[RMDB]
RNA sequence: GGGAACGACUCGAGUAGAGUCGAAAACAAACCGUGCAGUAAUUGUCAAGACCAAAUUGUUUUCAGCAACUGAACAAGUUCGACUAUCCAACAACCCUGCAGUUGUCAUGGGCUACCUAUUGGAUGACGUUCAUCCCACAUUCGUGUGGGAUGAACGAAAAGAAACAACAACAACAAC
Reactivity to DMS in 0.01 (KOAc 150mM, MgCl2 10mM, bicine 150mM(pH8.5), 24C), signal-to-noise 1, nucleotides 027 to 126: c100a090a110a060c150c100g010u010g020c000a000g000u010a080a070u000u000g000u050c040a080a020g000a150c060c080a010a100a070u020u020g000u000u000u000u010c050a040g000c100a010a040c040u000g000a090a040c100a030a030g000u000u000c040g020a030c030u000a060u000c030c030a000a060c190a100a060c030c000c010u010g050c020a150g010u000u000g000u010c030a060u010g010g000g000c020u000a070c160c190u000a070u010u000g020g000a040u000g030a160